[RMDB]
The record gives the reactivity of an RNA of 177 nucleotides to 2A3 and DMS. For 2A3 the reverse transcriptase was SuperScript II with manganese. Values are in units of 0.01, from 0 to 300, in steps of 10. The RNA was probed in 150 mM KOAc, 10 mM MgCl2 and 150 mM bicine (pH 8.5) at 24 C.

RNA sequence: GGGAACGACUCGAGUAGAGUCGAAAAACGGUACCGUGGACGUUUACUAAAUACCGGGCUUGUAUCAGGUCGACUUCCACUAAGGUAGACAACAAAAGACGCCUGACGCGCCGUGCUGCAGACGCGAGCCUACCCUUCACUUCGGUGAAGGGUAGGCAAAAGAAACAACAACAACAAC
Reactivity to 2A3 in 0.01 (KOAc 150mM, MgCl2 10mM, bicine 150mM(pH8.5), 24C), signal-to-noise 1, nucleotides 027 to 126: a000c000g020g010u000a050c000c000g010u010g000g080a000c000g000u140u020u060a020c050u110a000a000a200u140a030c090c100g070g040g000c000u070u150g120u000a060u050c030a050g000g050u000c060g030a050c040u040u020c000c000a040c030u040a130a010g010g000u110a080g060a090c080a070a020c020a000a300a010a020g070a000c050g050c000c000u000g060a000c080g020c000g000c090c110g030u030g000c100u030g020c000a020g010a050c010g050c040g000a000
Reactivity to DMS in 0.01 (KOAc 150mM, MgCl2 10mM, bicine 150mM(pH8.5), 24C), signal-to-noise 1, nucleotides 027 to 126: a130c000g000g000u000a190c010c050g020u000g000g010a000c000g050u000u000u000a020c120u140a010a130a140u000a170c020c030g050g000g000c100u080u070g000u000a220u010c140a100g000g000u000c000g050a170c130u000u000c000c000a120c060u030a130a030g000g030u150a000g000a000c120a000a090c160a160a070a160a000g080a170c100g000c000c000u000g000a110c240g050c150g010c000c010g010u000g000c210u000g080c000a080g000a040c000g000c000g000a120